RNA sequence: GGGAACGACUCGAGUAGAGUCGAAAAGCAAGGUAGAUCUCGAUGUUUCGACGAGUGCUAGCGCAGCGCGCUGGAAGAUUUACUCUCGUUGUAUUGGAAAUGAGAAGCACAGUUUUGGUGAAUCCAAGUUUUACCGUGUAUUCGUACACGGUAAAACAAAAGAAACAACAACAACAAC
Reactivity to 2A3 in 0.01 (KOAc 150mM, MgCl2 10mM, bicine 150mM(pH8.5), 24C), signal-to-noise 3, nucleotides 027 to 126: g040c050a060a040g090g030u050a030g000a070u010c010u030c050g060a090u100g130u030u090u050c050g030a020c030g020a030g010u040g080c000u000a000g020c000g010c050a100g250c050g000c000g000c120u020g010g000a080a070g040a090u070u090u080a060c040u000c000u000c030g010u030u010g070u060a170u070u200g140g060a060a070a060u100g030a040g010a050a020g000c010a010c000a080g000u000u070u100u100g090g010u060g050a050a020u060c030c030a030a030
Reactivity to DMS in 0.01 (KOAc 150mM, MgCl2 10mM, bicine 150mM(pH8.5), 24C), signal-to-noise 5, nucleotides 027 to 126: g010c060a080a080g010g020u000a060g010a060u000c020u000c020g010a110u000g010u000u010u000c050g020a060c030g020a060g010u000g010c020u010a040g030c020g030c030a140g010c210g000c020g020c010u000g000g010a100a110g010a130u010u000u010a190c070u000c000u000c020g020u010u000g010u000a150u000u010g010g010a060a070a050u000g000a050g010a060a080g010c050a040c050a090g000u000u000u000u000g000g010u000g010a080a160u000c010c040a040a110